Structure probing data (DMS and 2A3) for a 177-nucleotide construct.
Values are in units of 0.01, from 0 to 300, in steps of 10.
[RMDB]
RNA sequence: GGGAACGACUCGAGUAGAGUCGAAAAUCGCCGAGGAUCUGGAUCGCAAUCCGUUCGAGGCAUACCUCGCUGACAUCGCGACGACCUCCGCCGAAGCGAAAUACGCGGCCAAGCGGGUGCGCAGGUGGUUGCAGUGGUUCUUCGGAACCACUGCAACAAAAGAAACAACAACAACAAC
Reactivity to DMS in 0.01 (KOAc 150mM, MgCl2 10mM, bicine 150mM(pH8.5), 24C), signal-to-noise 2, nucleotides 027 to 126: u000c100g000c010c000g000a300g030g000a060u020c090u100g050g000a050u080c150g040c070a210a100u000c000c060g060u000u000c050g050a210g000g000c100a150u000a070c080c030u050c050g000c030u060g000a130c300a110u000c080g030c030g000a080c010g000a100c060c060u000c000c000g020c010c050g000a130a150g000c020g000a050a070a070u000a190c100g000c010g000g110c120c080a050a120g000c000g000g000g000u000g000c080g070c100a090g000g050u000g000
Reactivity to 2A3 in 0.01 (KOAc 150mM, MgCl2 10mM, bicine 150mM(pH8.5), 24C), signal-to-noise 2, nucleotides 027 to 126: u120c110g000c070c000g010a030g070g060a060u110c140u220g060g000a030u040c100g040c190a100a090u050c000c030g000u050u050c000g010a010g000g000c020a000u030a000c010c050u030c020g050c050u130g050a100c020a050u100c060g010c000g040a080c040g020a020c020c020u070c030c000g000c000c000g040a040a000g030c010g000a010a020a020u190a030c010g000c000g010g070c040c010a060a000g030c010g000g020g000u080g000c000g040c030a030g040g060u100g010

The RNA was probed in 150 mM KOAc, 10 mM MgCl2 and 150 mM bicine (pH 8.5) at 24 C.
It was measured as part of the RMDB library OK1LIB.
DMS adducts were read by reverse transcription with MarathonRT.
For 2A3, 1,159 sequencing reads were counted.